[RMDB]
Chemical mapping of a 177-nucleotide RNA with 2A3 and DMS. 2A3 adducts were read by reverse transcription with SuperScript II with manganese. Values cover nucleotides 27 to 126.

RNA sequence: GGGAACGACUCGAGUAGAGUCGAAAAGAAGAGCAGGCAGAUAAUCUUGUGCAGUAUGCAUGCUCGUAACUCCACACGAAGGAAGGCAGCAAAAGAAUAACUGCCACUGCACAAGUGGAGCCGCAGACAUCCGGAGGACUUUCGAGUCCUCCGGAUGAAAAGAAACAACAACAACAAC
Reactivity to 2A3 in 0.01 (KOAc 150mM, MgCl2 10mM, bicine 150mM(pH8.5), 24C), signal-to-noise 3, nucleotides 027 to 126: g170a040a010g010a000g020c030a040g010g000c000a000g050a260u120a130a120u080c040u030u030g000u030g010c000a000g000u100a040u150g060c100a040u060g020c000u010c020g020u010a030a070c050u010c060c020a040c000a000c130g180a100a020g140g040a040a060g020g000c000a000g000c010a080a090a000a000g090a080a120u150a170a000c010u010g000c000c000a010c020u010g000c000a000c000a000a000g000u000g030g050a020g010c000c010g060c010a000g020a070
Reactivity to DMS in 0.01 (KOAc 150mM, MgCl2 10mM, bicine 150mM(pH8.5), 24C), signal-to-noise 2, nucleotides 027 to 126: g000a090a120g000a050g000c000a050g040g010c050a070g000a200u090a180a060u020c010u020u010g010u020g020c000a010g050u010a020u060g000c050a110u000g000c000u030c040g020u090a070a080c100u000c060c120a140c210a170c050g020a150a100g000g000a170a100g030g000c010a000g010c110a030a030a100a130g000a140a100u060a050a250c000u010g000c030c020a190c000u010g000c010a000c000a030a060g040u020g010g000a110g070c000c010g060c150a060g000a200